[RMDB]
RNA sequence: GGGAACGACUCGAGUAGAGUCGAAAAACGCCGAUACGUCGGCGAGCAGGCUGAGGUAGUUGGUUGUAUGGUUUUGCAUCAUAAUCAGCCUGGAGUUAACUGUACAACCUUCUAGCUUUCCCUGCAAACUGUUAGUCCGGUUCGCCGGACUAACAGUAAAAGAAACAACAACAACAAC
Reactivity to DMS in 0.01 (KOAc 150mM, MgCl2 10mM, bicine 150mM(pH8.5), 24C), signal-to-noise 1, nucleotides 027 to 126: a180c010g000c000c000g020a000u020a050c280g100u000c010g010g000c000g010a060g040c020a000g000g040c300u010g000a010g000g000u000a040g030u000u030g000g000u010u060g000u000a000u000g030g000u000u000u010u060g010c030a060u030c020a000u020a000a100u060c270a200g000c080c070u040g000g000a090g070u000u000a000a000c030u000g000u010a000c070a000a000c000c000u000u000c000u000a000g010c000u010u010u010c300c040c010u000g000c000a080a070
Reactivity to 2A3 in 0.01 (KOAc 150mM, MgCl2 10mM, bicine 150mM(pH8.5), 24C), signal-to-noise 2, nucleotides 027 to 126: a000c020g020c040c020g010a020u010a060c230g090u020c010g020g000c010g010a000g010c000a000g030g010c030u030g010a020g040g090u000a000g030u010u010g000g000u000u000g000u000a020u020g040g040u000u010u070u190g110c010a090u040c030a030u090a260a050u120c070a040g150c080c110u060g010g010a010g000u010u110a000a020c000u000g020u010a000c000a010a020c000c000u000u000c010u020a090g020c000u020u020u020c010c000c000u020g000c000a090a070

The record gives the reactivity of an RNA of 177 nucleotides to DMS and 2A3. 2A3 adducts were read by reverse transcription with SuperScript II with manganese. It was measured as part of the RMDB library RFM100. The reactions ran in a buffer of 150 mM KOAc, 10 mM MgCl2 and 150 mM bicine (pH 8.5), at 24 C. The DMS profile rests on 1,439 reads.